The data come from the RNA Mapping Database (RMDB), library RNAMAK. Structure probing data (2A3) for a 207-nucleotide construct. 2A3 adducts were read by reverse transcription with SuperScript II with manganese.

[RMDB]
RNA sequence: GGGAACGACUCGAGUAGAGUCGAAAAUGUGAGUAAAUUCGUUUACUCACAAAAAAGAUAUGGAUGAUUCGACAUGCAGAUGACUUCGGAAACGAAGUCUACCUGCAACAGCGAGAUCAUCCUAAGUCAAAAACGGAAUUAGUUCGCUAAUUCCGAACAGCCAUUCAAGGUUCGCCUUGAAUGGCUGAAAAGAAACAACAACAACAAC
Reactivity to 2A3 in 0.01 (KOAc 150mM, MgCl2 10mM, bicine 150mM(pH8.5), 24C), signal-to-noise 1, nucleotides 027 to 156: u040g000u000g000a000g010u000a000a010a090u080u120c120g040u070u000u010a000c000u040c020a010c000a000a000a010a000a000a070g110a070u090a050u080g010g000a000u000g020a020u000u020c050g010a040c150a070u300g000c010a000g000a040u030g000a000c000u000u000c000g020g020a070a050a040c010g020a000a000g020u000c000u000a020c010c000u040g040c050a040a000c040a010g010c000g050a050g040a200u000c000a000u000c010c000u010a040a010g030u000c040a030a000a000a120a120c000g000g000a000a000u000u000a000g060u090u080c200g000c100u000a000a000u000u000c000c000g000a000a000